Chemical mapping of a 207-nucleotide RNA with 2A3 and DMS. The reactions ran in a buffer of 150 mM KOAc, 10 mM MgCl2 and 150 mM bicine (pH 8.5), at 24 C. For DMS, 2,334 sequencing reads were counted. The 2A3 profile rests on 1,140 reads.
RNA sequence: GGGAACGACUCGAGUAGAGUCGAAAAGGACGAGCUAUGGCCAUUGCAGCCCUGGACAUGGCGGAAUGUAAUCCGUGGCCCCGAAUUGUACUGUCAGAGCACAGCAGCCUUACUAAUCUACGGGCCUGGAUGCUGAAACAUGUACGCAACAGCCGAGACAAAGUCAGUUGUUCGCAACUGACUUUGUAAAAGAAACAACAACAACAAC
Reactivity to 2A3 in 0.01 (KOAc 150mM, MgCl2 10mM, bicine 150mM(pH8.5), 24C), signal-to-noise 2, nucleotides 027 to 156: g050g000a020c050g010a000g040c020u040a050u140g020g000c020c040a040u020u100g000c040a060g050c070c050c000u040g050g000a020c030a030u080g060g000c070g010g080a150a000u120g040u170a070a090u000c000c060g160u050g040g000c000c000c000c000g080a060a100u150u090g010u020a070c010u050g020u060c080a090g010a050g270c100a030c010a070g060c030a010g000c000c010u070u040a080c020u070a020a160u020c010u070a060c000g010g030g000c000c000u000g020g020a070u050g000c020u020g030a010a080a050c040a020u100g030u210a020c050g020c040a050a040c010a090g050c020c070g030a020g000
Reactivity to DMS in 0.01 (KOAc 150mM, MgCl2 10mM, bicine 150mM(pH8.5), 24C), signal-to-noise 1, nucleotides 027 to 156: g010g010a030c000g010a090g010c020u020a040u000g000g020c030c000a160u000u000g000c030a160g020c030c020c050u000g020g010a100c030a060u020g000g000c080g010g020a090a130u020g030u000a110a050u000c020c010g050u010g020g030c000c000c000c000g000a030a130u000u000g010u000a000c010u000g030u000c020a200g000a160g010c080a100c000a130g000c000a080g000c010c020u000u010a110c040u000a080a070u010c060u000a090c160g010g000g040c010c030u000g000g010a090u000g030c000u020g000a300a060a040c040a080u020g000u010a060c080g030c020a050a080c050a140g010c020c000g020a240g010